An RNA of 177 nucleotides, treated with DMS and 2A3 and read out base by base. For 2A3 the reverse transcriptase was SuperScript II with manganese. For DMS the reverse transcriptase was MarathonRT. For 2A3, 1,969 sequencing reads were counted. For DMS, 1,624 sequencing reads were counted. It was measured as part of the RMDB library OK2TST. The reactions ran in a buffer of 150 mM KOAc, 10 mM MgCl2 and 150 mM bicine (pH 8.5), at 24 C.

RNA sequence: GGGAACGACUCGAGUAGAGUCGAAAAUCUCUGACUGCGGUUAGCCGUCAGGAUGAGAAACUGGAUAUUAACAUCGAUGAAGAAGUGCAUCGUCUGCGUGAAAAAAGCGUAGAACUGACACGUAAAACAUACCAUCCAGCUUCGGCUGGAUGGUAUGAAAAGAAACAACAACAACAAC
Reactivity to DMS in 0.01 (KOAc 150mM, MgCl2 10mM, bicine 150mM(pH8.5), 24C), signal-to-noise 3, nucleotides 027 to 126: u000c000u000c000u000g020a300c010u000g020c060g080g000u010u010a140g040c010c050g010u020c030a010g010g000a160u020g010a060g000a040a060a140c090u000g040g010a090u010a090u000u000a140a040c130a070u000c060g020a050u010g000a110a110g000a090a130g010u000g000c010a060u000c110g010u000c010u000g000c000g000u000g000a010a060a060a060a150a200g000c040g030u000a010g020a030a040c060u000g000a170c050a020c070g000u000a050a070a070a150
Reactivity to 2A3 in 0.01 (KOAc 150mM, MgCl2 10mM, bicine 150mM(pH8.5), 24C), signal-to-noise 2, nucleotides 027 to 126: u000c020u000c010u030g040a010c000u010g010c000g000g240u110u180a050g050c000c000g010u040c010a010g000g000a030u040g000a010g020a020a070a030c070u070g140g020a070u090a060u170u150a130a030c040a150u100c070g090a100u070g090a040a130g050a110a020g010u010g020c000a030u010c040g020u000c010u020g010c000g000u070g050a020a030a140a100a140a070g010c010g000u000a000g010a040a010c020u110g040a040c010a000c050g000u070a040a000a000a070